[RMDB]
This 177-nucleotide RNA was probed chemically with 2A3 and DMS.
The 2A3 profile rests on 2,532 reads.
For DMS, 1,111 sequencing reads were counted.

RNA sequence: GGGAACGACUCGAGUAGAGUCGAAAAGAUAUGGACCCACUGAAACUAUGAACACGUUGAAAUCGGAAACGAUGGAGUGUCAUAGGAGUACUGUGGGUCCUAAGUCAAACGGCCCUUCGGGGCCGAAGGUUCUUACUAUCUUCGGAUAGUAAGAACCAAAAGAAACAACAACAACAAC
Reactivity to 2A3 in 0.01 (KOAc 150mM, MgCl2 10mM, bicine 150mM(pH8.5), 24C), signal-to-noise 1, nucleotides 027 to 126: g020a020u060a070u070g000g000a010c020c000c000a000c030u060g030a020a020a020c010u010a020u050g100a280a010c010a000c040g300u300u060g010a040a010a010u010c010g000g060a080a040a050c010g000a010u010g000g020a050g000u000g000u000c000a000u000a000g040g020a000g040u010a010c060u010g000u080g040g000g010u020c000c000u010a000a000g000u030c010a000a010a020c000g000g000c000c000c000u030u030c210g070g030g080g020c000c000g000a030a020
Reactivity to DMS in 0.01 (KOAc 150mM, MgCl2 10mM, bicine 150mM(pH8.5), 24C), signal-to-noise 1, nucleotides 027 to 126: g000a030u000a300u000g010g010a040c010c000c010a010c000u030g010a280a200a130c010u000a020u020g000a040a050c000a010c020g000u000u000g000a080a130a000u000c010g020g000a150a050a130c010g000a010u000g000g000a130g010u000g000u000c000a000u000a000g010g010a110g000u000a050c130u000g010u000g010g010g000u010c000c010u000a010a020g000u030c030a080a070a210c000g000g020c010c000c000u000u010c140g030g000g040g020c000c020g000a010a040